[RMDB]
RNA sequence: GGGAACGACUCGAGUAGAGUCGAAAAAGAUCACACUGUUGAAAACGUGAGCGUCCUCCAGGCGGCGAAGGCACAAAUCCUUGAGUUUAAGAACGUUACAUUCGACUUGGACCACGUGAAUCGCAUGCUGUGGAAGCUUUUUCGAAAGCUUCCACAGAAAAGAAACAACAACAACAAC
Reactivity to 2A3 in 0.01 (KOAc 150mM, MgCl2 10mM, bicine 150mM(pH8.5), 24C), signal-to-noise 3, nucleotides 027 to 126: a000g120a020u060c010a010c020a030c150u140g040u300u200g070a050a050a040a070c040g040u060g030a080g020c030g000u040c000c000u070c000c000a010g000g010c030g000g000c030g080a070a070g100g030c000a040c000a080a160a000u050c020c000u050u030g010a000g080u040u040u150a110a070g040a100a000c040g030u100u080a090c130a090u070u100c050g030a080c060u050u030g030g060a030c030c000a060c040g050u070g010a060a080u040c000g000c050a020u190g080
Reactivity to DMS in 0.01 (KOAc 150mM, MgCl2 10mM, bicine 150mM(pH8.5), 24C), signal-to-noise 2, nucleotides 027 to 126: a010g000a060u040c000a040c070a130c020u000g010u000u000g020a110a050a020a060c150g040u010g000a060g010c080g050u020c000c020u010c060c120a070g000g000c030g000g020c010g010a150a070g020g060c060a010c120a130a140a090u010c020c020u000u010g000a260g000u000u000u000a040a090g060a030a080c070g020u050u020a020c160a150u000u000c020g000a070c000u020u020g020g010a010c000c020a010c130g000u000g000a150a150u000c080g010c050a030u080g000